Notes
This 177-nucleotide RNA was probed chemically with DMS and 2A3. Reactivities are given for positions 27 through 126.

RNA sequence: GGGAACGACUCGAGUAGAGUCGAAAAAGGCCCACCCCAGCAGUUCACGGGAGGCUGAUGGGCCUUCUGAUGCCCUGGGAAUCCCAGGGGCUCUCGUGGGGUAAACUGAGUCACAGAGUCCUGGUGACACAACUUAGUGAUUCGUCACUAAGUUGUGAAAAGAAACAACAACAACAAC
Reactivity to DMS in 0.01 (KOAc 150mM, MgCl2 10mM, bicine 150mM(pH8.5), 24C), signal-to-noise 6, nucleotides 027 to 126: a080g020g000c010c010c010a130c130c030c030c030a090g020c110a060g010u010u010c110a160c050g000g000g010a030g010g010c020u000g000a120u010g010g010g010c000c000u000u000c020u010g010a180u000g010c090c070c000u000g000g000g000a200a120u010c060c000c010a070g000g010g000g020c010u000c010u000c120g020u000g000g000g000g010u010a050a050a120c120u000g000a150g000u000c010a030c020a060g000a090g000u000c040c010u000g000g020u000g000a150
Reactivity to 2A3 in 0.01 (KOAc 150mM, MgCl2 10mM, bicine 150mM(pH8.5), 24C), signal-to-noise 4, nucleotides 027 to 126: a000g100g030c020c010c000a030c030c020c010c000a020g040c040a020g040u130u110c050a010c040g020g000g010a010g030g000c020u050g040a300u230g110g040g000c010c000u020u020c010u020g100a120u100g020c010c000c000u000g040g000g060a110a150u110c020c000c010a020g030g000g020g020c010u000c000u010c020g040u030g000g030g000g040u060a060a050a030c080u130g060a010g110u060c010a000c000a020g020a020g040u020c000c020u060g060g030u110g020a020
The DMS profile rests on 10,073 reads. 2A3 adducts were read by reverse transcription with SuperScript II with manganese. The reactions ran in a buffer of 150 mM KOAc, 10 mM MgCl2 and 150 mM bicine (pH 8.5), at 24 C.